[RMDB]
RNA sequence: GGGAACGACUCGAGUAGAGUCGAAAAGCUGCGUGAGUUAUGGUAAAUGGCGCUGCGAUCCACGUCUUGUCGCAAAUCAACAAGAGAUUGAUCACGUAGCGGUUCGGUUGGCCCUUCGGUCGGCUGGUCAAGCUAGGCUGUUCGCGGCCUGGCUUGAAAAAGAAACAACAACAACAAC
Reactivity to 2A3 in 0.01 (KOAc 150mM, MgCl2 10mM, bicine 150mM(pH8.5), 24C), signal-to-noise 9, nucleotides 027 to 126: g000c000u010g000c000g000u020g010a060g040u140u140a100u180g070g080u140a080a100a090u130g030g000c030g010c050u040g010c030g020a030u040c040c040a060c030g060u010c040u060u080g050u050c020g010c080a030a060a100u060c020a020a130c020a130a030g060a020g020a210u030u080g030a020u030c000a000c010g000u000a000g000c000g000g000u060u040c000g010g010u010u010g020g000c010c030c000u070u110c060g000g010u000c010g000g010c010u030g010g060
Reactivity to DMS in 0.01 (KOAc 150mM, MgCl2 10mM, bicine 150mM(pH8.5), 24C), signal-to-noise 9, nucleotides 027 to 126: g030c000u000g000c000g010u000g000a050g010u010u010a050u020g000g020u020a060a090a070u020g000g000c050g010c100u010g000c030g000a050u010c080c090a100c110g010u010c040u010u010g000u000c040g010c100a040a080a120u020c060a050a050c070a110a070g010a100g000a120u010u010g000a090u000c000a010c010g010u000a020g010c000g000g000u010u020c050g010g000u000u010g000g000c010c020c130u020u030c110g010g030u000c030g000g010c010u000g000g010